[RMDB]
RNA sequence: GGGAACGACUCGAGUAGAGUCGAAAAGCAAAGAAAUUUUAUCCCAAUAAGGCGAAGCGUGCAAGUCGAAUAAAGCUAAUGCUGCUAGCGAGCACGCGAGCGCUAGCAGACUCCUAGCGAGAAAAAACAAUAGGGAGUUCUUCGGAACUCCCUAUUGAAAAGAAACAACAACAACAAC
Reactivity to DMS in 0.01 (KOAc 150mM, MgCl2 10mM, bicine 150mM(pH8.5), 24C), signal-to-noise 1, nucleotides 027 to 126: g020c180a020a080a140g000a090a110a060u000u000u000u000a230u000c000c000c000a220a110u000a110a090g000g020c000g000a110a090g010c000g050u000g040c010a070a210g020u000c040g030a150a100u020a060a060a100g000c050u000a050a080u000g000c010u000g010c010u010a020g000c000g010a120g000c000a020c030g000c030g000a000g000c010g000c000u000a000g000c000a030g000a090c040u000c020c040u000a050g040c000g030a140g010a020a040a060a090a130a150